[RMDB]
RNA sequence: GGGAACGACUCGAGUAGAGUCGAAAAUACUUGCUUCGGGGCGAGGGUGUUUAGCCCUUAGAACCGCAGUUGGUUCCUCGGAACGAAACUCGUGGUUCCUGUGGUUCACACCUGACCUCCUGAGCAGAAAAGAAAAAAGAAGGCGGCUCGGAGGAGCGAUGAUAUCAGUGUUCGCACUGAUAUCAUCAAAAGAAACAACAACAACAAC
Reactivity to 2A3 in 0.01 (KOAc 150mM, MgCl2 10mM, bicine 150mM(pH8.5), 24C), signal-to-noise 4, nucleotides 027 to 156: u100a020c060u050u070g000c010u020u030c040g000g000g000g000c010g010a010g010g000g010u000g030u010u120u150a030g010c000c010c000u000u020a030g000a000a000c000c000g000c000a010g000u030u050g070g000u010u000c020c020u030c250g090g000a030a010c010g090a220a050a030c040u120c220g030u010g000g000u010u020c020c020u070g100u300g010g010u040u050c060a000c000a000c000c000u010g020a040c010c000u000c010c000u010g000a000g000c010a000g030a000a120a010a010g010a010a080a010a020a010a020g070a050a020g060g020c080g010g000c050u050c060g110g030a050g030g030a040g050c040
Reactivity to DMS in 0.01 (KOAc 150mM, MgCl2 10mM, bicine 150mM(pH8.5), 24C), signal-to-noise 1, nucleotides 027 to 156: u000a050c050u000u000g020c000u000u000c300g040g010g030g050c080g000a150g020g030g040u020g030u000u030u000a250g010c010c010c000u010u000a070g000a030a040c000c010g060c040a160g030u000u000g020g020u020u000c000c030u010c150g030g000a090a090c020g020a120a100a050c010u000c080g060u000g000g020u000u000c000c020u000g020u000g030g020u020u000c300a050c000a050c000c020u040g000a190c130c000u000c030c010u020g020a010g010c000a060g000a040a000a110a050g000a010a090a080a080a040a070g010a060a040g000g000c040g000g020c030u000c030g000g000a070g020g030a050g000c050
The record gives the reactivity of an RNA of 207 nucleotides to 2A3 and DMS. The RNA was probed in 150 mM KOAc, 10 mM MgCl2 and 150 mM bicine (pH 8.5) at 24 C. The data come from the RNA Mapping Database (RMDB), library VIROID. 2A3 adducts were read by reverse transcription with SuperScript II with manganese. DMS adducts were read by reverse transcription with MarathonRT.